Chemical mapping of a 177-nucleotide RNA with 2A3 and DMS. Values cover nucleotides 27 to 126.
[RMDB]
RNA sequence: GGGAACGACUCGAGUAGAGUCGAAAAAAUAUUUAUCACCUGAAGAGGUUGCAAAUUUCUUUGAUCAAUUAGAUAUUGAUGACGAUGAAUAUGAGUUGCUAUUUGAUAAAAUGAAUGCGACAUACGCCCACUGUAAGUUUUUCGAAACUUACAGUGGAAAAGAAACAACAACAACAAC
Reactivity to 2A3 in 0.01 (KOAc 150mM, MgCl2 10mM, bicine 150mM(pH8.5), 24C), signal-to-noise 5, nucleotides 027 to 126: a000a000u150a030u020u080u040a070u000c030a070c030c000u030g040a080a020g040a010g160g050u030u060g120c030a030a070a110u030u060u000c030u000u020u100g030a010u030c010a030a040u030u070a090g070a160u160a040u140u040g020a020u050g030a080c160g050a060u050g050a070a000u070a050u110g160a110g010u010u030g010c040u070a070u020u050u070g160a140u140a130a090a020a050u120g070a070a040u060g000c000g010a000c030a030u190a040c050g070c010
Reactivity to DMS in 0.01 (KOAc 150mM, MgCl2 10mM, bicine 150mM(pH8.5), 24C), signal-to-noise 4, nucleotides 027 to 126: a080a040u010a030u010u000u010a040u000c040a160c100c070u020g020a070a050g020a020g010g010u010u040g010c190a060a040a140u010u010u000c010u000u000u000g000a030u000c010a010a020u000u010a080g000a120u020a050u000u010g000a000u000g000a120c120g000a050u000g000a040a020u020a030u000g000a090g000u000u000g000c020u020a040u010u000u010g010a110u030a050a040a030a100u020g000a040a040u000g000c010g000a030c040a060u020a080c150g010c100